This 177-nucleotide RNA was probed chemically with DMS and 2A3. Reactivities are rounded to 0.1 and cut off at 0 and 3. Source: RMDB library OK1LIB, as collected in RNAgym.
[RMDB]
RNA sequence: GGGAACGACUCGAGUAGAGUCGAAAACUAUUUAUAGACAGAACAGUGGAAAACGUAUAUCGCUAUAAACCUUACACACCGAUUCUUCCAGUCGUACAAUUCCACAUAGGCGAGGCAUAAGCGAAAGCACCUACCGGGAUUUCGAUCCCGGUAGGUGAAAAGAAACAACAACAACAAC
Reactivity to DMS in 0.01 (KOAc 150mM, MgCl2 10mM, bicine 150mM(pH8.5), 24C), signal-to-noise 1, nucleotides 027 to 126: c050u110a060u060u120u060a060u000a010g000a020c020a260g030a040a050c180a100g040u020g020g000a170a000a030a120c020g000u020a030u000a030u040c070g000c010u000a010u000a040a000a040c060c080u000u000a070c070a050c010a100c040c000g000a060u010u000c000u000u000c050c090a070g000u060c000g000u000a040c120a020a220u000u030c010c000a020c100a030u030a150g010g000c030g100a040g030g030c090a050u000a060a070g040c030g020a130a110a010g000
Reactivity to 2A3 in 0.01 (KOAc 150mM, MgCl2 10mM, bicine 150mM(pH8.5), 24C), signal-to-noise 2, nucleotides 027 to 126: c000u020a050u000u070u010a070u020a010g080a030c110a040g000a200a010c020a010g050u020g070g110a120a120a040a000c010g060u080a020u020a010u140c020g000c010u010a020u050a040a070a100c010c000u120u030a100c050a010c000a000c030c040g090a050u020u030c040u010u000c020c000a000g010u040c050g000u060a030c030a000a120u070u010c000c000a010c060a110u110a070g150g000c040g010a070g050g000c040a080u030a100a070g030c020g070a030a050a000g080
For DMS, 1,095 sequencing reads were counted. Values cover nucleotides 27 to 126. The reactions ran in a buffer of 150 mM KOAc, 10 mM MgCl2 and 150 mM bicine (pH 8.5), at 24 C. DMS (dimethyl sulfate) methylates the pairing face of unpaired adenines and cytosines. 2A3 adducts were read by reverse transcription with SuperScript II with manganese.